[RMDB]
RNA sequence: GGGAACGACUCGAGUAGAGUCGAAAAGAAGACGCUGACCGUGUUCUACGCAGACACCCGCCAGGAACUGCCACCGCUGGCCAUCGCGGCGCACCAAAUCAUGGAUGAACUGCAGGACCGCAGCAUCCACGUCGAGGUGGUAUGCGCACCGCUCGACUCCUACGUUAGGGUUCGCCCUAACGUAGGAAAAAGAAACAACAACAACAAC
Reactivity to 2A3 in 0.01 (KOAc 150mM, MgCl2 10mM, bicine 150mM(pH8.5), 24C), signal-to-noise 1, nucleotides 027 to 156: g100a010a010g040a000c030g000c030u080g080a130c020c030g040u030g040u120u110c110u090a070c050g000c070a010g070a120c030a090c050c000c030g040c040c030a050g000g030a080a070c020u000g020c040c000a040c090c080g010c050u010g080g060c000c000a080u130c040g000c000g000g020c000g030c030a040c000c030a100a100a000u110c050a080u120g030g020a010u060g090a170a180c000u020g000c030a060g000g170a030c040c140g000c020a010g000c000a020u030c000c000a030c010g040u020c010g000a020g010g070u090g030g000u010a060u180g080c030g030c000a050c000c050g040c030u040c050g030a020c010
Conditions: 150 mM KOAc, 10 mM MgCl2 and 150 mM bicine (pH 8.5), 24 C. The record gives the reactivity of an RNA of 207 nucleotides to 2A3. It was measured as part of the RMDB library OK3TST.